[RMDB]
This 207-nucleotide RNA was probed chemically with 2A3. The data come from the RNA Mapping Database (RMDB), library OK3TST. Conditions: 150 mM KOAc, 10 mM MgCl2 and 150 mM bicine (pH 8.5), 24 C.
RNA sequence: GGGAACGACUCGAGUAGAGUCGAAAAAGACGCUCAGAGAGCACCGGGGCGUUCUGCCAGACCCACUGUGCGAAGCCGGCGUUGUCGCUCUCCGGGGUGAUCAGGCGGUUACGGGACUGAGCCCCGACCUCACCGUCCUCGGUCACGAUGACGCACGAACCGUACUUCCAUUCGUGGAAGUACGGUUAAAAGAAACAACAACAACAAC
Reactivity to 2A3 in 0.01 (KOAc 150mM, MgCl2 10mM, bicine 150mM(pH8.5), 24C), signal-to-noise 1, nucleotides 027 to 156: a000g050a010c070g000c020u050c080a060g030a020g010a020g110c020a000c050c100g000g030g000g020c040g060u120u000c090u150g060c070c000a080g030a180c050c000c000a120c080u120g090u110g000c020g030a090a000g080c020c100g000g000c010g100u060u040g030u020c020g020c020u010c000u000c000c000g050g000g000g010u050g000a090u160c010a020g020g000c010g000g000u030u190a030c010g010g030g060a090c160u200g010a140g100c000c000c000c000g060a080c030c020u010c000a010c010c010g080u140c000c020u020c000g000g020u000c010a010c020g000a000u060g040a010c000g000c030a050c100g000